[RMDB]
RNA sequence: GGGAACGACUCGAGUAGAGUCGAAAAUUACAUAUUUCAAGUGACAGUUAAGGGAACACCUUUUUCAUGAGUUUUUUGGUUAUGUAACCUUGUCUCAUUACAUAAUUCUGUGAUGAUACAAAUGUAAAAUAUAAUGUCCAUUAUGACAUAAACAUGACGGUACGAUUUUAUUCGUAAAAUCGUACCGAAAAGAAACAACAACAACAAC
Reactivity to 2A3 in 0.01 (KOAc 150mM, MgCl2 10mM, bicine 150mM(pH8.5), 24C), signal-to-noise 5, nucleotides 027 to 156: u070u040a020c010a020u080a030u060u120u230c040a040a060g050u020g090a010c030a030g020u040u050a030a030g060g010g030a130a050c050a190c080c010u060u030u020u070u050c090a120u120g100a070g110u030u050u010u030u050u050g020g010u020u030a010u040g010u030a020a050c010c000u010u020g010u010c010u000c010a010u000u010a000c010a010u190a160a190u300u180c080u040g010u010g010a010u000g000a000u000a020c010a000a060a030u110g030u200a080a100a070a010u220a020u040a100a090u030g010u000c000c020a020u110u170a100u300g020a000c000a020u110a000a080a040c070a070u100g060a020
Reactivity to DMS in 0.01 (KOAc 150mM, MgCl2 10mM, bicine 150mM(pH8.5), 24C), signal-to-noise 1, nucleotides 027 to 156: u000u030a070c060a110u000a070u010u010u000c030a080a220g030u030g000a080c050a190g040u020u000a060a060g000g000g010a140a240c150a120c020c000u020u000u000u000u000c010a080u010g020a210g060u000u000u000u000u000u000g010g040u010u000a020u020g020u000a080a060c020c090u000u010g010u000c060u000c040a010u000u010a010c010a000u000a100a090u000u000c300u010g040u000g000a090u000g020a110u000a080c020a010a040a070u020g010u010a050a070a120a090u020a080u020a070a060u000g010u000c000c070a120u000u000a070u010g030a060c010a120u000a090a040a100c080a090u000g000a260

Structure probing data (2A3 and DMS) for a 207-nucleotide construct.
For 2A3 the reverse transcriptase was SuperScript II with manganese.
For DMS the reverse transcriptase was MarathonRT.
The RNA was probed in 150 mM KOAc, 10 mM MgCl2 and 150 mM bicine (pH 8.5) at 24 C.
It was measured as part of the RMDB library OK3TST.
For DMS, 2,032 sequencing reads were counted.